An RNA of 207 nucleotides, treated with 2A3 and DMS and read out base by base.
Source: RMDB library OK3TST, as collected in RNAgym.
The reactions ran in a buffer of 150 mM KOAc, 10 mM MgCl2 and 150 mM bicine (pH 8.5), at 24 C.
Values cover nucleotides 27 to 156.
[RMDB]
RNA sequence: GGGAACGACUCGAGUAGAGUCGAAAAACCGCCACCUGCUCUGCAUUUAGAAUAAGCAUAUGUGGCUGCUGACAUUGCCCAGGAAGAGGUGCAGGGCUAUACUGCUGCAGGAGAAGAGAAGCACUUGGGAUGGUUAGCAGUGGGGCGGUAAGUGGAACAUUAGCAGGGGAUUCGUCCCCUGCUAAUGAAAAGAAACAACAACAACAAC
Reactivity to 2A3 in 0.01 (KOAc 150mM, MgCl2 10mM, bicine 150mM(pH8.5), 24C), signal-to-noise 2, nucleotides 027 to 156: a000c010c000g040c000c000a250c010c010u030g000c010u000c010u050g000c030a070u020u110u150a160g040a180a070u190a220a010g000c020a020u030a090u300g060u090g100g000c010u020g000c010u020g010a050c030a090u120u160g050c000c020c020a060g000g090a090a090g050a040g040g040u030g000c010a010g010g020g000c010u010a010u020a020c030u020g060c000u000g000c020a010g020g100a070g050a110a010g030a030g020a090a030g030c020a030c060u030u030g040g020g010a020u040g040g020u060u100a010g000c010a000g010u030g010g000g000g000c020g000g000u000a040a030g040u010g000g020a080a040
Reactivity to DMS in 0.01 (KOAc 150mM, MgCl2 10mM, bicine 150mM(pH8.5), 24C), signal-to-noise 1, nucleotides 027 to 156: a050c020c010g060c000c000a010c090c050u000g030c020u000c040u000g000c020a050u000u000u040a120g020a130a140u000a120a050g000c070a060u000a080u020g010u000g000g020c010u000g020c030u010g000a070c060a030u000u000g020c030c020c030a190g040g010a180a090g030a090g000g040u000g010c000a040g030g000g010c020u010a070u010a090c010u000g030c010u000g000c020a160g000g000a130g030a050a090g000a130g000a130a100g050c000a070c070u000u000g000g030g020a170u020g010g010u000u000a020g050c050a040g000u020g000g020g010g000c030g030g010u000a000a060g020u000g000g000a130a260